[RMDB]
RNA sequence: GGGAACGACUCGAGUAGAGUCGAAAACGCUGGGCAGCCUAGGUGGCUCCCCACCUAUUAGAACUACUCAUCGACUGAAGCGCGCACGGUCGAUGAGCUAAUAGAGGCCACCGAAGGCUGCCUGUGCUGAAGCGCGCACGGCAACCGAAAGGUGCGAGCACCAGUAAUAGUUCGCUAUUACUGGUGCAAAAGAAACAACAACAACAAC
Reactivity to DMS in 0.01 (KOAc 150mM, MgCl2 10mM, bicine 150mM(pH8.5), 24C), signal-to-noise 1, nucleotides 027 to 156: c060g020c000u010g010g000g010c020a080g000c020c000u020a300g000g060u000g030g080c060u010c300c050c000c030a300c070c000u020a050u000u030a060g030a080a150c050u000a300c000u000c010a090u000c000g000a040c030u000g000a100a070g020c040g040c040g020c010a300c010g000g030u000c010g000a000u010g000a020g000c010u000a030a080u000a070g000a270g000g000c000c000a010c000c030g000a160a220g020g020c000u010g000c000c030u000g000u000g060c020u000g030a040a020g000c030g030c010g010c030a110c050g000g000c030a120a140c020c060g000a090a220a150g020g020u000g000c000g010a230
Reactivity to 2A3 in 0.01 (KOAc 150mM, MgCl2 10mM, bicine 150mM(pH8.5), 24C), signal-to-noise 3, nucleotides 027 to 156: c050g000c020u050g000g010g010c000a000g000c000c000u020a020g000g000u000g000g010c000u070c040c020c000c000a010c000c000u000a000u000u000a000g020a040a000c110u230a080c000u300c000a000u010c000g010a000c000u010g040a180a010g020c010g010c000g020c000a010c040g030g000u010c000g000a000u000g000a000g000c000u000a000a000u000a000g000a010g000g000c000c000a000c010c000g000a130a020g000g010c000u000g000c000c000u000g000u020g000c010u100g030a070a040g000c000g010c000g000c020a000c010g070g000c020a110a150c010c010g050a120a040a050g060g000u080g030c050g140a050
Annotation: An RNA of 207 nucleotides, treated with DMS and 2A3 and read out base by base. The data come from the RNA Mapping Database (RMDB), library RNAMAK. The 2A3 profile rests on 2,801 reads. The reactions ran in a buffer of 150 mM KOAc, 10 mM MgCl2 and 150 mM bicine (pH 8.5), at 24 C.